[RMDB]
RNA sequence: GGGAACGACUCGAGUAGAGUCGAAAAGAUAUGGACCGAUGUGCUAGCUCGUGGUCGGAAACGACCAUACGAGCUUGGACCACACGGUCCUAAGUCAAAGGUUGGCUGACUUCGGUCAGCCAACCAAGUUGAUCUGAAUGUUCGCAUUCAGAUCAACAAAAGAAACAACAACAACAAC
Reactivity to DMS in 0.01 (KOAc 150mM, MgCl2 10mM, bicine 150mM(pH8.5), 24C), signal-to-noise 3, nucleotides 027 to 126: g010a010u000a030u010g000g000a000c000c000g000a170u010g000u000g000c000u000a030g030c000u000c000g030u000g000g010u000c000g020g010a020a000a040c000g000a010c010c000a040u010a020c300g010a030g030c000u000u010g000g000a040c300c010a020c020a010c020g000g000u000c000c000u000a000a050g000u000c000a120a070a130g010g000u010u000g010g010c000u000g010a020c000u000u010c280g010g040u000c000a010g000c020c000a000a010c010c000a010a040
Reactivity to 2A3 in 0.01 (KOAc 150mM, MgCl2 10mM, bicine 150mM(pH8.5), 24C), signal-to-noise 1, nucleotides 027 to 126: g010a010u010a010u060g000g000a020c030c030g180a300u010g010u000g020c010u030a020g000c000u000c010g030u010g030g010u000c010g000g000a010a010a010c000g030a010c000c010a020u080a040c060g000a020g030c000u010u190g010g000a000c010c000a000c000a000c000g020g000u000c000c010u010a000a000g000u000c000a100a080a060g010g000u010u000g000g060c030u030g000a010c010u180u140c300g060g040u000c000a010g000c000c000a000a000c010c000a000a000